[RMDB]
RNA sequence: GGGAACGACUCGAGUAGAGUCGAAAAGAUAUGGAUUCGACCCAUCUUUUGACGCCCGUCGGAAACGACGGAAGCGAUAAGAUGCGAAUCCUAAGUCAAAACCCGGGUAGCUUCGGCUACCCGGGAACCAACUACUAGACUUCGGUCUAGUAGUUGGAAAAGAAACAACAACAACAAC
Reactivity to DMS in 0.01 (KOAc 150mM, MgCl2 10mM, bicine 150mM(pH8.5), 24C), signal-to-noise 1, nucleotides 027 to 126: g040a040u000a230u010g000g000a020u000u000c000g000a210c190c300c050a030u000c010u000u000u020u000g030a180c000g010c030c000c010g000u010c020g000g000a100a060a120c000g010a010c000g010g000a020a030g000c000g010a100u010a020a030g000a040u000g000c020g010a010a010u010c000c000u010a010a120g000u000c020a100a050a190a150c010c000c000g000g000g030u000a010g010c030u000u020c280g020g020c010u000a000c010c020c000g030g000g000a010a010
Reactivity to 2A3 in 0.01 (KOAc 150mM, MgCl2 10mM, bicine 150mM(pH8.5), 24C), signal-to-noise 2, nucleotides 027 to 126: g010a010u060a010u110g010g000a000u000u030c020g080a240c020c090c060a010u000c020u050u210u150u210g170a120c010g000c000c030c000g010u010c000g010g000a090a030a020c010g000a010c000g030g010a090a020g000c000g030a040u020a260a060g000a010u030g040c010g030a000a000u020c000c000u000a080a040g020u020c010a020a090a090a300c000c000c000g050g000g000u000a010g000c030u100u050c300g060g000c030u000a000c060c020c000g050g010g020a000a020